[RMDB]
RNA sequence: GGGAACGACUCGAGUAGAGUCGAAAAGAUUCCUCGUUGUUGAGCGAGGUUUAAACAAAUCGACCACACAAACGUAGAGCCGACUACGGAUUUAUAAAUUAAGGCAUUCAGUGUGAUAAGGAGACAAAAAACGAUGUUGUGUUCGCACAACAUCGAACAGUACCGGUUGGUUCGCCAACCGGUACUGAAAAGAAACAACAACAACAAC
Reactivity to 2A3 in 0.01 (KOAc 150mM, MgCl2 10mM, bicine 150mM(pH8.5), 24C), signal-to-noise 1, nucleotides 027 to 156: g030a060u190u170c000c020u030c000g000u000u070g000u030u030g020a000g000c000g020a000g010g000u060u150u090a030a030a030c040a000a030a000u000c000g000a000c020c000a000c000a000c000a000a180a020c000g000u000a000g000a060g080c000c020g000a020c000u000a000c000g040g000a000u000u250u000a230u030a240a000a040u000u090a000a000g000g030c000a030u080u180c210a300g000u050g000u000g000a000u040a050a030g130g000a050g000a030c120a020a100a000a210a050a030c000g000a000u000g000u000u000g000u000g060u000u030c240g110c040a030c000a000a000c000a000u000c000g000a000a030

The record gives the reactivity of an RNA of 207 nucleotides to 2A3. For 2A3, 581 sequencing reads were counted. The RNA was probed in 150 mM KOAc, 10 mM MgCl2 and 150 mM bicine (pH 8.5) at 24 C.